RNA sequence: GGGAACGACUCGAGUAGAGUCGAAAAGAUAUGGAUCCGCCAUGGAGCACUCUUCAAGUUAACUCGGUGUCGGAAACGACAUGCGAGUUAACUUGAAGAGUGCUAUGAAGUGGAGGAUCCUAAGUCAGAUAACAGAAGACUUCGGUCUUCUGUUAUCAAAAGAAACAACAACAACAAC
Reactivity to DMS in 0.01 (KOAc 150mM, MgCl2 10mM, bicine 150mM(pH8.5), 24C), signal-to-noise 2, nucleotides 027 to 126: g010a040u010a300u010g010g000a000u000c000c000g010c000c000a010u000g000g010a020g040c010a000c000u000c010u010u000c010a010a020g020u000u000a010a000c000u000c010g030g020u000g000u000c000g000g010a110a070a170c010g010a000c000a000u000g020c000g000a020g010u010u000a000a010c020u000u000g000a000a000g000a010g040u000g010c000u000a020u010g010a100a260g020u000g010g010a030g000g010a000u000c000c000u000a000a080g010u010c090a160
This 177-nucleotide RNA was probed chemically with DMS. DMS adducts were read by reverse transcription with MarathonRT. The reactions ran in a buffer of 150 mM KOAc, 10 mM MgCl2 and 150 mM bicine (pH 8.5), at 24 C.